[RMDB]
RNA sequence: GGGAACGACUCGAGUAGAGUCGAAAAUGGUGUUAAGUGGAAUAAGUGGAAAAAUAUACAUAUAUGUACAGGGGGCUACAUAUAUGUAUAUGCCCCCUUAAGUCAGUAUAAGUAGGUAUAAGGUGGAGAUAUGGAGGAGUUUCGACUCCUCCAUAUCAAAAGAAACAACAACAACAAC
Reactivity to 2A3 in 0.01 (KOAc 150mM, MgCl2 10mM, bicine 150mM(pH8.5), 24C), signal-to-noise 2, nucleotides 027 to 126: u060g020g030u050g050u160u130a080a080g010u090g070g040a130a050u100a130a000g010u140g030g100a080a040a000a150a010u050a000u010a010c010a000u000a000u010a010u020g000u040a010c060a090g040g000g020g020g040c010u000a000c010a000u010a000u020a000u020g020u010a000u000a000u000g000c000c000c000c020c000u010u000a040a010g030u020c050a000g040u050a040u030a190a060g110u110a030g110g000u040a080u020a210a030g080g020u050g020g120a160
Reactivity to DMS in 0.01 (KOAc 150mM, MgCl2 10mM, bicine 150mM(pH8.5), 24C), signal-to-noise 3, nucleotides 027 to 126: u020g010g020u010g010u000u020a040a110g030u030g000g010a110a070u000a040a050g010u010g000g000a040a110a060a110a070u000a010u010a010c000a010u000a000u010a010u010g000u010a030c080a130g000g000g000g000g000c140u000a010c020a030u000a040u010a020u030g020u000a010u010a010u010g010c120c030c000c020c000u000u000a000a090g010u010c050a080g010u030a110u010a070a120g010u010a040g010g000u000a060u020a050a060g010g010u000g020g010a250
The data come from the RNA Mapping Database (RMDB), library OK1LIB. Chemical mapping of a 177-nucleotide RNA with 2A3 and DMS. For DMS the reverse transcriptase was MarathonRT. The reactions ran in a buffer of 150 mM KOAc, 10 mM MgCl2 and 150 mM bicine (pH 8.5), at 24 C. The 2A3 profile rests on 1,093 reads.